[RMDB]
RNA sequence: GGGAACGACUCGAGUAGAGUCGAAAAGAUAUGGAGACGGAAACACGCCGUCACUAUUCGGAAACGAACGAAUGACGGAACUACGUGCACUCCGUCUCCUAAGUCAAAACUACACUUCGGUGUAGAACUGAUUGAAGGUGUUCGCACCUUCAAUCAGAAAAGAAACAACAACAACAAC
Reactivity to 2A3 in 0.01 (KOAc 150mM, MgCl2 10mM, bicine 150mM(pH8.5), 24C), signal-to-noise 1, nucleotides 027 to 126: g020a000u020a020u200g000g000a010g010a010c000g000g000a020a120a000c010a000c000g000c010c020g020u030c010a010c020u030a050u000u050c030g060g000a030a100a110c020g050a010a000c000g070a300a300u040g000a000c010g000g020a090a020c060u220a040c250g010u000g030c020a060c090u010c000c000g000u000c000u000c010c000u010a000a000g000u000c000a000a000a040a070c000u000a000c000a000c010u060u060c300g170g000u000g020u020a030g040a050a060
Reactivity to DMS in 0.01 (KOAc 150mM, MgCl2 10mM, bicine 150mM(pH8.5), 24C), signal-to-noise 1, nucleotides 027 to 126: g000a060u020a300u030g000g000a050g000a000c000g000g040a010a110a150c000a030c000g000c000c000g000u000c020a040c040u000a300u000u000c000g040g000a060a140a180c010g010a000a000c140g000a020a000u000g000a020c000g010g020a090a070c170u010a300c000g030u020g000c110a130c180u000c000c000g000u000c010u000c000c000u010a020a060g010u000c020a080a020a060a080c000u000a000c000a000c000u030u000c260g100g000u000g000u020a010g000a070a160